[RMDB]
RNA sequence: GGGAACGACUCGAGUAGAGUCGAAAAGUGGUGGAUCCUCUCCACAGCCAGCUGUCUGAGUAAACUGAAACAGUUAAACUCUGACAUUUCAGGAGUCUUUGACCAAGAAGAUGUCUUACAAGGCCACCCUCUGAAUAGUAUUCGUACUAUUCAGAGGAAAAGAAACAACAACAACAAC
Reactivity to DMS in 0.01 (KOAc 150mM, MgCl2 10mM, bicine 150mM(pH8.5), 24C), signal-to-noise 9, nucleotides 027 to 126: g020u000g020g020u000g010g010a100u000c070c070u000c110u000c020c010a080c100a140g010c060c070a100g010c170u000g010u000c020u000g010a040g020u000a110a050a040c010u010g000a140a110a120c130a020g010u000u000a080a080a090c030u010c000u000g010a020c010a060u000u000u000c130a090g000g000a100g000u000c020u000u000u010g010a120c120c100a090a130g000a060a070g010a060u000g010u000c030u000u010a090c120a070a120g000g010c020c070a080c140
Reactivity to 2A3 in 0.01 (KOAc 150mM, MgCl2 10mM, bicine 150mM(pH8.5), 24C), signal-to-noise 9, nucleotides 027 to 126: g060u040g010g010u030g040g060a170u100c020c030u050c020u000c010c010a020c010a020g080c020c010a040g030c040u040g010u000c000u020g010a010g010u040a050a050a040c010u030g130a280a140a110c060a060g000u010u040a170a170a030c010u000c000u030g010a020c010a030u030u130u090c080a040g000g050a050g030u000c010u040u060u090g060a090c050c040a070a040g020a030a010g040a080u080g120u090c020u050u090a070c050a080a050g030g000c010c020a020c020